[RMDB]
RNA sequence: GGGAACGACUCGAGUAGAGUCGAAAACGUCGAUUCUGGGGAACGUAAUGGCGGGGAUGGAGACAUUGGUGAUGUCGCCGGUGAUGGGGAUGUUGACCGGGAUGUCGACAUUGAGGAACGCGGCAGGAGCUGCCGAAUCAUUCGUGAUUCGGCAGCUAAAAGAAACAACAACAACAAC
Reactivity to 2A3 in 0.01 (KOAc 150mM, MgCl2 10mM, bicine 150mM(pH8.5), 24C), signal-to-noise 2, nucleotides 027 to 126: c050g020u030c020g050a120u120u000c040u060g000g030g050g050a120a110c020g090u190a020a210u130g020g040c140g000g010g030g020a060u070g040g020a000g030a050c010a070u090u180g090g010u140g020a060u050g000u010c000g010c080c000g050g000u040g050a130u040g020g030g020g000a000u030g000u020u080g090a060c000c040g080g040g000a070u190g070u030c020g000a050c030a030u000u060g020a030g030g040a070a140c060g010c000g040g000c030a030g000g070
Reactivity to DMS in 0.01 (KOAc 150mM, MgCl2 10mM, bicine 150mM(pH8.5), 24C), signal-to-noise 1, nucleotides 027 to 126: c080g000u030c120g030a120u040u030c050u020g000g000g090g000a010a110c210g000u000a080a060u000g000g040c080g030g000g050g010a070u000g000g000a050g000a070c070a020u000u030g000g110u000g000a100u000g010u010c070g010c050c030g020g000u060g000a100u050g000g000g020g000a070u000g000u020u000g000a040c040c010g000g010g000a040u020g020u000c000g000a050c010a060u000u100g000a060g030g000a050a100c090g020c050g010g000c030a110g000g000